RNA sequence: GGGAACGACUCGAGUAGAGUCGAAAACGGAACAGCUACAUGCACGUUACAUGAUGUAGCACGCUGGGUCUAUGAUGGUAAUUUGGACGACGAGUGGCCAAUAUUAAAGUGGCAAGGCAUGCCCGGACCUGGAUGCGCUAAAUUAGGAUCAGAUACCGAGCGGUACAGAAUUCGUUCUGUACCGCUCAAAAGAAACAACAACAACAAC
Reactivity to 2A3 in 0.01 (KOAc 150mM, MgCl2 10mM, bicine 150mM(pH8.5), 24C), signal-to-noise 1, nucleotides 027 to 156: c040g020g000a020a080c020a080g000c020u030a000c000a060u100g050c050a020c160g210u220u270a040c020a130u190g000a020u000g020u050a000g000c060a000c020g000c000u000g000g000g000u000c020u020a160u090g130a130u070g080g120u050a050a050u000u090u110g000g010a010c060g000a000c000g020a010g130u070g020g000c000c000a050a000u110a130u130u060a010a010a010g150u060g000g020c000a000a000g060g000c020a020u020g020c000c020c000g000g050a020c000c000u000g020g020a040u090g020c030g050c020u050a100a130a060u160u130a060g060g000a010u030c070a010g070a040u100a140c150c020